[RMDB]
RNA sequence: GGGAACGACUCGAGUAGAGUCGAAAAUGGAAGCACUAUCGAAGCAGAUCGUCGCCAGUGUCGCCAAGCAGACCGGCGGAGUGCUGCGCGGAUAAAGCAAUGAAAGCCUGAGCCCGCCGAUUGGCGAGCUAAAUAUACCUUUCGAGGUAUAUUUAGCAAAAGAAACAACAACAACAAC
Reactivity to DMS in 0.01 (KOAc 150mM, MgCl2 10mM, bicine 150mM(pH8.5), 24C), signal-to-noise 9, nucleotides 027 to 126: u010g010g010a140a070g010c040a070c080u000a070u000c060g010a110a220g010c060a070g010a090u010c070g010u000c020g010c020c020a080g020u010g010u000c030g010c030c060a050a110g020c110a130g010a060c090c040g010g000c010g010g000a060g020u010g010c010u000g000c130g010c110g020g010a090u000a040a120a130g010c110a090a080u010g000a080a110a160g000c020c020u000g000a100g000c030c020c010g010c010c010g000a160u010u010g010g010c020g010a080
Reactivity to 2A3 in 0.01 (KOAc 150mM, MgCl2 10mM, bicine 150mM(pH8.5), 24C), signal-to-noise 8, nucleotides 027 to 126: u080g030g010a060a030g020c030a020c060u060a030u100c040g060a120a010g030c050a030g020a070u040c030g030u030c010g040c020c020a070g030u040g030u140c010g000c030c020a060a030g040c040a030g050a120c050c010g010g000c020g020g010a080g020u130g050c020u020g010c050g000c030g030g000a040u070a120a090a020g040c040a020a090u150g080a150a040a010g030c000c010u030g020a030g020c010c010c000g000c010c010g110a150u060u160g010g010c020g010a010

Structure probing data (DMS and 2A3) for a 177-nucleotide construct. In probing experiments dimethyl sulfate is read out at A N1 and C N3, which are open when not base-paired. For DMS, 24,763 sequencing reads were counted. It was measured as part of the RMDB library OK2TST. Conditions: 150 mM KOAc, 10 mM MgCl2 and 150 mM bicine (pH 8.5), 24 C. 2A3 is a SHAPE reagent: it acylates the 2'-hydroxyl of flexible nucleotides of all four kinds.